[RMDB]
RNA sequence: GGGAACGACUCGAGUAGAGUCGAAAAAUAAACGCGAUAUCCCAAAGAAACGCGAAAGGACCGAAGCCGAUAACUACGAAAAGUAGGGUCCAAAGCGUAAAUCGGCUAAAAACGCUAAAGAAAAAAACGUACCCUAUAAGUUCGCUUAUAGGGUACGAAAAGAAACAACAACAACAAC
Reactivity to 2A3 in 0.01 (KOAc 150mM, MgCl2 10mM, bicine 150mM(pH8.5), 24C), signal-to-noise 1, nucleotides 027 to 126: a000u090a000a080a000c090g000c020g020a030u030a040u090c090c020c040a060a000a000g070a000a070a010c010g010c010g090a200a010a000g000g000a000c020c020g060a080a000g010c020c000g030a000u040a070a060c020u020a030c000g110a300a000a000a000g000u030a030g010g000g000u000c030c000a000a060a000g030c020g010u000a000a000a050u030c000g000g070c000u010a150a050a000a060a050c040g010c050u080a110a110a050g220a110a180a070a000a000a000a020
Reactivity to DMS in 0.01 (KOAc 150mM, MgCl2 10mM, bicine 150mM(pH8.5), 24C), signal-to-noise 1, nucleotides 027 to 126: a120u010a070a120a060c070g000c000g020a290u000a020u020c000c000c020a120a120a070g000a050a050a030c000g000c000g020a080a180a180g000g020a010c000c000g020a090a100g000c020c000g000a020u000a050a300c010u000a030c000g030a100a060a130a100g000u000a010g000g010g020u000c020c000a080a070a160g000c030g030u000a010a090a070u000c000g000g000c050u060a060a050a140a090a030c020g000c040u020a030a160a110g050a010a030a060a040a090a060a150
The record gives the reactivity of an RNA of 177 nucleotides to 2A3 and DMS. Reactivities are given for positions 27 through 126. Conditions: 150 mM KOAc, 10 mM MgCl2 and 150 mM bicine (pH 8.5), 24 C.